[RMDB]
RNA sequence: GGGAACGACUCGAGUAGAGUCGAAAACAACCUGGGAGUUACGUCCGGAUAUUGCACCAGGGGCAAUAGAACGGUAGACAUCAACUGAUGCGAGAGCAUCUCAACUUAUGGACCUUAGUGUAUCGCAAGACGACUGGUCCUGUCGGAAUUGCGUAGAGGAUUAUGCAUGGUUCGCCAUGCAUAAUCCAAAAGAAACAACAACAACAAC
Reactivity to DMS in 0.01 (KOAc 150mM, MgCl2 10mM, bicine 150mM(pH8.5), 24C), signal-to-noise 2, nucleotides 027 to 156: c050a100a200c000c000u010g010g000g020a180g010u000u010a070c040g030u000c010c010g010g010a220u000a060u000u000g000c030a140c040c100a100g050g020g020g020c030a010a080u000a050g000a170a120c040g020g060u000a070g030a060c050a040u000c030a030a180c000u000g030a060u010g000c010g020a300g010a280g010c010a040u000c020u020c080a040a120c150u000u000a070u000g010g000a000c010c010u000u000a150g000u000g000u000a070u000c040g010c180a140a150g000a130c010g020a100c120u000g020g010u000c000c020u000g050u000c020g000g000a160a150u000u020g030c030g030u010a120g000a300
Reactivity to 2A3 in 0.01 (KOAc 150mM, MgCl2 10mM, bicine 150mM(pH8.5), 24C), signal-to-noise 2, nucleotides 027 to 156: c010a020a070c000c000u020g030g060g000a120g020u060u060a080c050g030u030c040c000g010g000a040u020a040u010u090g010c060a060c050c080a070g100g010g080g000c010a010a050u030a040g130a180a060c030g040g000u040a050g040a070c030a070u120c030a020a230c060u080g010a000u010g000c010g010a020g000a020g040c000a020u000c010u000c010a010a160c000u150u140a060u100g010g030a030c000c070u070u070a100g020u110g070u150a060u050c020g010c050a000a010g070a080c020g000a020c030u100g000g080u080c050c000u020g000u000c000g050g100a140a100u030u060g000c010g030u020a050g040a120